RNA sequence: GGGAACGACUCGAGUAGAGUCGAAAAGGGUCCAGGUGCCGGCCGCCGUGAAAGACGUACACGGACGAGCUGUAGUGCGAGGGCGUCAGUUUCAGGGACACCGCGGUACCCCCGAGCCCCGUCGUGCCCUCCCGUCUAGAUUCGUCUAGACGGGAGGAAAAGAAACAACAACAACAAC
Reactivity to 2A3 in 0.01 (KOAc 150mM, MgCl2 10mM, bicine 150mM(pH8.5), 24C), signal-to-noise 2, nucleotides 027 to 126: g010g000g030u080c070c090a070g000g030u010g020c040c020g100g060c000c040g000c020c010g090u040g090a060a040a010g140a010c030g090u190a030c060a020c000g040g120a060c000g010a060g040c120u120g130u280a090g000u040g120c040g030a100g000g080g010c020g040u020c010a060g060u020u050u060c030a020g010g040g040a020c020a020c000c020g030c020g020g010u070a030c010c000c060c000c020g010a010g000c020c010c000c010g120u090c010g000u090g050c000
Reactivity to DMS in 0.01 (KOAc 150mM, MgCl2 10mM, bicine 150mM(pH8.5), 24C), signal-to-noise 2, nucleotides 027 to 126: g030g010g050u000c020c070a140g000g020u010g000c030c050g000g020c050c100g000c010c030g030u010g000a060a060a100g000a110c090g030u000a170c020a120c030g010g000a070c050g010a130g070c050u010g020u020a060g020u000g010c070g030a110g000g010g020c020g010u000c030a070g020u000u000u000c070a090g000g010g000a070c030a050c050c070g000c160g000g000u000a060c030c000c010c080c030g000a130g010c040c010c020c060g040u000c110g040u000g010c090
An RNA of 177 nucleotides, treated with 2A3 and DMS and read out base by base. The RNA was probed in 150 mM KOAc, 10 mM MgCl2 and 150 mM bicine (pH 8.5) at 24 C. For DMS the reverse transcriptase was MarathonRT. It was measured as part of the RMDB library OK2TST.